[RMDB]
RNA sequence: GGGAACGACUCGAGUAGAGUCGAAAACGUUGAACAGCAGUGGCCGGUCACCCGCCGAACCCUCACAGUGAAUGGUGCCGUAGCUCGGCCAUUGACCUUGACGGUGCCACUGGGCACGUCACUGCGCCCUACGAUUGGUAUUCGUACCAAUCGUAGGAAAAGAAACAACAACAACAAC
Reactivity to 2A3 in 0.01 (KOAc 150mM, MgCl2 10mM, bicine 150mM(pH8.5), 24C), signal-to-noise 3, nucleotides 027 to 126: c050g030u060u190g070a120a040c030a060g060c020a000g000u020g040g000c020c010g000g020u060c040a060c050c010c020g000c000c010g020a060a070c010c000c010u050c000a090c040a050g050u050g120a150a080u130g020g030u070g070c020c020g040u050a040g040c050u050c060g000g030c010c020a050u050u130g050a060c000c030u010u050g030a020c040g040g030u020g040c030c010a080c100u090g000g000g000c030a000c050g000u000c000a000c000u010g000c000g020c000
Reactivity to DMS in 0.01 (KOAc 150mM, MgCl2 10mM, bicine 150mM(pH8.5), 24C), signal-to-noise 4, nucleotides 027 to 126: c150g020u000u010g020a090a080c160a130g000c030a040g020u000g000g000c030c050g020g010u010c080a130c050c070c060g000c020c030g010a080a090c070c020c030u000c080a070c140a080g010u000g000a090a050u020g010g030u000g040c070c030g000u010a130g010c090u010c040g000g000c010c040a050u000u010g000a050c030c020u000u010g030a030c100g000g010u000g000c020c030a130c110u020g010g000g020c050a070c090g000u010c000a050c020u000g010c060g000c160
The record gives the reactivity of an RNA of 177 nucleotides to 2A3 and DMS. It was measured as part of the RMDB library OK2TST. For 2A3, 4,931 sequencing reads were counted. For 2A3 the reverse transcriptase was SuperScript II with manganese. The reactions ran in a buffer of 150 mM KOAc, 10 mM MgCl2 and 150 mM bicine (pH 8.5), at 24 C.